The record gives the reactivity of an RNA of 115 nucleotides to 2A3. Conditions: 150 mM KOAc, 10 mM MgCl2 and 150 mM bicine (pH 8.5), 24 C. It was measured as part of the RMDB library P50LIB.
RNA sequence: GGGAACGACUCGAGUAGAGUCGAAAAUAAUAAAACUCAUUAAUCAAUAAAUAAAAAUAUAAAUGGACAAAUAAAAGGUGAGCAUUCGUGCUCACAAAAGAAACAACAACAACAAC
Reactivity to 2A3 in 0.01 (KOAc 150mM, MgCl2 10mM, bicine 150mM(pH8.5), 24C), signal-to-noise 1, nucleotides 027 to 095: u060a000a040u050a050a040a020a020c000u000c000a020u050u190a050a060u060c040a040a070u180a160a030a020u180a110a060a060a070a020u110a010u060a110a110a040u030g000g000a000c020a000a100a010u130a060a100a010a000g140g000u000g000a000g020c000a000u000u070c110g100u020g000c010u000c020a010c010a000